[RMDB]
RNA sequence: GGGAACGACUCGAGUAGAGUCGAAAAUAAACAUUCCGGAAUUGUCGAAGGAAUGAAGGAUCCGUUCGCCCUAUGCGCUCCAACUCUAUGUUGAGUUGCUCAACAUCCAUGUGAAGAGAAUCCGACCAAAUGCGGAGCAGUUCGCUGCUCCGCAUUUAAAAGAAACAACAACAACAAC
Reactivity to DMS in 0.01 (KOAc 150mM, MgCl2 10mM, bicine 150mM(pH8.5), 24C), signal-to-noise 1, nucleotides 027 to 126: u010a100a290a240c020a020u000u000c010c050g030g010a180a140u000u000g010u020c060g040a300a250g000g000a030a010u000g060a160a120g020g000a030u000c040c020g000u000u000c020g010c040c050c070u000a060u000g010c040g030c060u000c070c020a060a010c040u000c060u000a020u000g020u000u000g000a070g000u000u000g020c050u010c050a060a090c050a110u010c030c030a070u000g000u020g000a070a060g000a160g000a160a100u000c010c020g050a180c110c060
Chemical mapping of a 177-nucleotide RNA with DMS. It was measured as part of the RMDB library OK2TST. Reactivities are given for positions 27 through 126. Conditions: 150 mM KOAc, 10 mM MgCl2 and 150 mM bicine (pH 8.5), 24 C.